[RMDB]
RNA sequence: GGGAACGACUCGAGUAGAGUCGAAAAGUGAUCAGGUACCAUGCACAUGGCAUGAUCGUACGAUCAGUACCGAUCUGAUCACAUGGUGUCGUACACUAGGAGUACAGAGCAUGCACUAGCACACGUAGUCUGUGUUAACUUUCGAGUUAACACAGACAAAAGAAACAACAACAACAAC
Reactivity to 2A3 in 0.01 (KOAc 150mM, MgCl2 10mM, bicine 150mM(pH8.5), 24C), signal-to-noise 8, nucleotides 027 to 126: g040u020g000a040u040c020a020g000g040u090a110c050c000a010u020g020c070a140c070a300u120g240g000c010a010u050g020a030u050c020g010u030a010c070g040a260u260c100a040g000u020a030c030c090g020a010u000c010u020g000a020u010c010a000c000a040u060g060g000u050g020u040c070g010u070a030c040a020c040u060a070g060g070a060g040u030a020c040a060g060a020g080c040a070u100g020c010a020c050u050a040g010c050a030c010a000c140g110u130a060
Reactivity to DMS in 0.01 (KOAc 150mM, MgCl2 10mM, bicine 150mM(pH8.5), 24C), signal-to-noise 9, nucleotides 027 to 126: g010u000g010a020u010c030a030g000g010u000a120c130c030a040u010g000c100a170c240a130u010g020g020c050a040u000g010a060u000c050g000u000a030c050g000a080u020c210a100g000u010a060c080c110g010a040u010c010u000g000a030u000c020a060c010a090u000g010g010u000g000u010c110g020u010a200c060a070c050u010a060g010g010a100g020u000a040c050a050g000a100g010c090a090u010g000c040a070c050u000a060g020c050a080c090a070c120g010u000a130
Notes:
The record gives the reactivity of an RNA of 177 nucleotides to 2A3 and DMS. For DMS the reverse transcriptase was MarathonRT. Reactivities are rounded to 0.1 and cut off at 0 and 3. For 2A3 the reverse transcriptase was SuperScript II with manganese.